[RMDB]
RNA sequence: GGGAACGACUCGAGUAGAGUCGAAAAGGACUCCGUGAGGAGUCCGUGCAGCGAGAGCUGCACAAGGGCUAAGUGUCUGUCGGUGCCCCUCCUCUACGAUGUUGAGUAGAGGAGAGUAGUCGUCUCACGAUUUAUAGUGAGACUGACAUGACAGAAGAUGUAUCAACUCAUUCGUGAGUUGAUACAUAAAAGAAACAACAACAACAAC
Reactivity to 2A3 in 0.01 (KOAc 150mM, MgCl2 10mM, bicine 150mM(pH8.5), 24C), signal-to-noise 4, nucleotides 027 to 156: g000g000a000c000u000c010c000g030u040g020a030g000g010a000g010u000c000c000g000u000g000c000a000g000c000g010a050g010a000g070c000u010g020c000a010c010a000a010g000g010g010c020u100a060a050g070u040g030u030c010u000g000u000c000g020g090u080g000c000c000c000c000u000c000c000u000c000u000a000c000g080a110u120g040u180u080g050a030g000u000a000g000a000g000g000a000g000a000g000u030a010g000u000c000g000u000c000u000c000a000c000g040a060u020u250u120a160u160a080g000u010g000a000g000a000c000u000g000a000c000a010u050g000a000c000a010g000a000a010g050
Reactivity to DMS in 0.01 (KOAc 150mM, MgCl2 10mM, bicine 150mM(pH8.5), 24C), signal-to-noise 3, nucleotides 027 to 156: g040g000a010c000u010c000c010g010u020g000a120g040g020a030g010u010c000c000g010u000g010c010a020g020c000g010a240g000a260g020c010u020g030c000a000c010a030a050g020g000g010c030u000a030a250g010u000g000u010c010u010g010u010c020g020g000u010g000c060c000c000c010u000c000c010u010c000u000a030c020g020a230u000g040u000u000g010a300g010u000a030g000a040g000g000a000g000a030g010u000a040g000u000c010g020u000c000u000c000a010c000g000a300u010u000u030a170u010a110g000u010g010a020g010a010c010u000g000a010c000a070u010g010a060c010a060g020a050a210g020